Chemical mapping of a 207-nucleotide RNA with DMS and 2A3. The data come from the RNA Mapping Database (RMDB), library M2RFPK. The reactions ran in a buffer of 150 mM KOAc, 10 mM MgCl2 and 150 mM bicine (pH 8.5), at 24 C. Reactivities are given for positions 27 through 156. 2A3 adducts were read by reverse transcription with SuperScript II with manganese.
[RMDB]
RNA sequence: GGGAACGACUCGAGUAGAGUCGAAAAGUUAUGCUCUCGCUGCCUAAUGGCGGUGCGGGAAACCCACUCUAAAGUCCUUAGGGUUAGCCCCUUAAGGCGGGGUUCGGAGGCAUCUGGCAACAGAAGCUGAAACUGUGCACAUUCGUGUGCACAGUAAUAGUUAAACACAAUUCGUUGUGUUUAACUAAAAAGAAACAACAACAACAAC
Reactivity to DMS in 0.01 (KOAc 150mM, MgCl2 10mM, bicine 150mM(pH8.5), 24C), signal-to-noise 3, nucleotides 027 to 156: g030u000u010a040u000g010c020u000c000u000c010g020c000u010g000c000c010u020a120a160u010g040g030c040g010g070u000g000c070g000g000g000a050a060a120c020c000c020a110c070u020c090u000a070a060a130g020u000c030c010u000u000a040g010g020g010u000u010a230g020c210c260c010c020u000u000a030a020g020g060c000g020g000g020g010u000u000c030g080g020a300g000g010c010a040u000c010u010g020g020c190a100a210c010a060g010a040a130g010c010u000g000a090a050a060c010u010g030u010g010c030a010c000a110u000u010c250g030u000g020u000g000c000a000c010a000g000u000a010a080
Reactivity to 2A3 in 0.01 (KOAc 150mM, MgCl2 10mM, bicine 150mM(pH8.5), 24C), signal-to-noise 4, nucleotides 027 to 156: g070u100u110a130u280g060c020u010c000u000c010g000c020u020g000c010c020u300a300a180u230g010g010c030g040g090u040g000c010g000g000g000a030a040a040c010c000c020a050c030u070c070u140a100a170a140g140u100c010c000u000u000a010g030g000g040u070u040a040g030c000c000c000c010u000u040a000a010g010g000c000g000g000g000g000u040u200c110g060g040a020g010g000c010a020u000c010u010g040g000c030a060a010c000a040g020a050a020g010c020u020g030a090a020a010c000u000g000u000g010c000a000c000a020u020u120c170g080u050g000u000g020c010a000c000a000g000u000a000a020